RNA sequence: GGGAACGACUCGAGUAGAGUCGAAAAGAUAUGGACCCAUGUAACAGCAACAGCUCGGAAACGAGACAUGCUGGGACAUAAGGGUCCUAAGUCAAAACGGAGAUCAAUCUUCGGAUUGAUCUCCGAACGUUAGGAUAGAGUUCGCUCUAUCCUAACGAAAAGAAACAACAACAACAAC
Reactivity to DMS in 0.01 (KOAc 150mM, MgCl2 10mM, bicine 150mM(pH8.5), 24C), signal-to-noise 6, nucleotides 027 to 126: g000a040u000a300u000g000g010a010c000c000c000a060u000g010u000a010a010c000a000g010c000a020a080c290a180g000c010u010c000g020g000a100a120a220c000g000a010g000a040c070a150u000g010c000u000g000g000g000a010c000a010u000a090a100g020g000g010u000c000c000u000a000a060g010u000c040a070a050a110a230c020g000g000a020g010a010u000c010a000a010u000c000u000u010c210g020g000a010u000u000g000a010u000c000u000c000c000g000a000a020
Reactivity to 2A3 in 0.01 (KOAc 150mM, MgCl2 10mM, bicine 150mM(pH8.5), 24C), signal-to-noise 6, nucleotides 027 to 126: g030a030u070a060u140g000g000a000c010c000c010a000u010g000u010a010a010c010a010g000c000a010a060c020a250g040c000u000c010g020g010a090a070a060c020g010a020g060a020c020a030u050g010c000u010g000g020g010a010c010a010u160a250a300g000g000g000u000c000c000u000a030a010g040u010c030a010a020a080a150c020g010g000a030g010a010u040c050a000a000u000c020u100u180c300g070g000a000u000u000g000a010u000c000u000c000c000g010a000a000

Background:
Chemical mapping of a 177-nucleotide RNA with DMS and 2A3. Source: RMDB library TTRDEL, as collected in RNAgym. 2A3 adducts were read by reverse transcription with SuperScript II with manganese. For 2A3, 18,253 sequencing reads were counted.